[RMDB]
RNA sequence: GGGAACGACUCGAGUAGAGUCGAAAAGUGUAUAGGCUUUCCGAGACCCCGCCUAUACACGAGUUAAGGGGUCAGGUCAUGUUAUGCUGGCUAUCUUACGUGUGCACCGAAGGGCUGCGGGUGCACACGCAUCUUACGCAGCCCAUUGCCAGCUAGAAGCUAUGCAUAAUUUCGAUUAUGCAUAGCUAAAAGAAACAACAACAACAAC
Reactivity to 2A3 in 0.01 (KOAc 150mM, MgCl2 10mM, bicine 150mM(pH8.5), 24C), signal-to-noise 3, nucleotides 027 to 156: g020u000g020u000a000u000a000g010g030c030u120u180u090c120c090g040a070g040a090c040c030c020c020g040c040c010u000a010u000a000c030a000c010g060a070g000u100u270a120a070g020g000g000g000u020c030a020g000g100u160c060a070u060g030u140u220a090u270g010c000u030g020g000c010u060a100u140c150u170u130a040c030g010u010g000u010g020c010a000c000c020g110a130a070g010g000g000c020u000g010c030g030g010g000u000g040c020a010c000a000c010g000c000a000u060c000u090u040a030c030g040c010a000g000c000c000c000a010u030u050g000c000c010a000g000c000u080a030g030a090
Reactivity to DMS in 0.01 (KOAc 150mM, MgCl2 10mM, bicine 150mM(pH8.5), 24C), signal-to-noise 2, nucleotides 027 to 156: g030u000g000u000a050u000a030g020g010c080u000u000u000c070c000g020a190g010a070c000c000c000c090g000c050c010u000a010u000a000c000a000c020g000a110g010u000u020a110a110g020g020g010g020u010c030a060g010g010u000c050a130u000g030u000u000a090u000g010c020u000g000g000c010u000a110u000c080u000u000a030c010g010u010g020u000g000c000a050c060c020g030a100a080g020g010g040c020u000g030c050g020g000g020u010g010c000a000c060a020c030g010c030a030u000c130u000u000a130c090g000c000a030g030c030c020c010a220u010u000g000c000c020a030g000c010u000a060g030a250